Conditions: 150 mM KOAc, 10 mM MgCl2 and 150 mM bicine (pH 8.5), 24 C. Chemical mapping of a 177-nucleotide RNA with 2A3 and DMS. The 2A3 profile rests on 7,117 reads. For DMS, 3,081 sequencing reads were counted.
RNA sequence: GGGAACGACUCGAGUAGAGUCGAAAAGAUAUGGAGGCAUGUGGGAGGAGAGUACUCGGAAACGAGUACGUUCCGAGGAUCACAUGAGCAACUCCUAAGUCAAAACUACCGCGUUCGCGCGGUAGAAGAGAAGAGUAACGUUCGCGUUACUCUUCUCAAAAGAAACAACAACAACAAC
Reactivity to 2A3 in 0.01 (KOAc 150mM, MgCl2 10mM, bicine 150mM(pH8.5), 24C), signal-to-noise 3, nucleotides 027 to 126: g000a000u010a000u040g000g000a000g010g020c000a000u000g010u000g010g020g010a020g000g000a000g000a000g000u000a010c000u000c010g000g000a000a010a000c000g000a000g010u000a020c000g030u050u000c010c000g090a230g000g000a000u000c000a000c000a020u020g040a030g090c060a140a300c020u010c000c000u010a010a000g010u010c000a000a010a100a160c010u000a010c000c000g010c040g030u040u060c300g000c010g010c020g140g000u000a000g000a030a030
Reactivity to DMS in 0.01 (KOAc 150mM, MgCl2 10mM, bicine 150mM(pH8.5), 24C), signal-to-noise 4, nucleotides 027 to 126: g000a030u000a040u020g000g000a010g000g000c010a010u000g000u000g000g020g000a010g020g010a040g020a050g000u000a030c000u000c000g000g040a020a040a030c010g000a020g010u000a010c000g010u000u000c000c000g010a080g040g000a040u000c010a020c010a010u000g010a300g010c300a070a200c010u010c010c000u000a010a160g000u010c010a080a060a140a100c020u000a010c000c000g000c000g030u010u020c230g000c000g040c000g020g000u000a000g000a050a070